[RMDB]
RNA sequence: GGGAACGACUCGAGUAGAGUCGAAAACACGAUUUUGUGGAAGGGUCUGGAGCACAAGAUCCGGCCGGAGAAGCAGAACAUCAGUGAAUACGGACUUCGUGUCUUUCUGGUGCUUCUGUGCGGCGGAGCGCACCUCGACUUUCGAGUCGAGGUGCGCAAAAGAAACAACAACAACAAC
Reactivity to DMS in 0.01 (KOAc 150mM, MgCl2 10mM, bicine 150mM(pH8.5), 24C), signal-to-noise 2, nucleotides 027 to 126: c060a130c110g000a050u010u000u000u000g030u000g000g010a110a130g000g000g000u010c020u000g000g000a100g030c090a100c100a070a040g000a100u010c000c050g000g010c030c000g000g000a160g010a090a270g000c000a000g010a020a060c010a000u000c010a010g010u000g000a100a110u010a100c130g000g010a060c120u010u010c060g000u020g000u000c010u010u010u000c010u000g000g010u000g010c220u000u000c000u000g030u000g000c000g010g010c000g010g000a060
Reactivity to 2A3 in 0.01 (KOAc 150mM, MgCl2 10mM, bicine 150mM(pH8.5), 24C), signal-to-noise 2, nucleotides 027 to 126: c040a010c050g060a110u050u120u140u070g050u060g100g090a140a100g040g030g010u010c030u010g050g060a100g070c060a020c020a120a030g000a020u000c020c000g060g090c000c030g060g010a220g020a090a010g010c020a000g000a010a000c000a010u020c000a000g010u040g150a070a010u120a120c070g040g040a080c080u080u090c280g080u060g020u090c000u000u160u040c020u010g020g020u020g010c120u040u000c010u000g000u100g000c000g020g000c150g070g060a090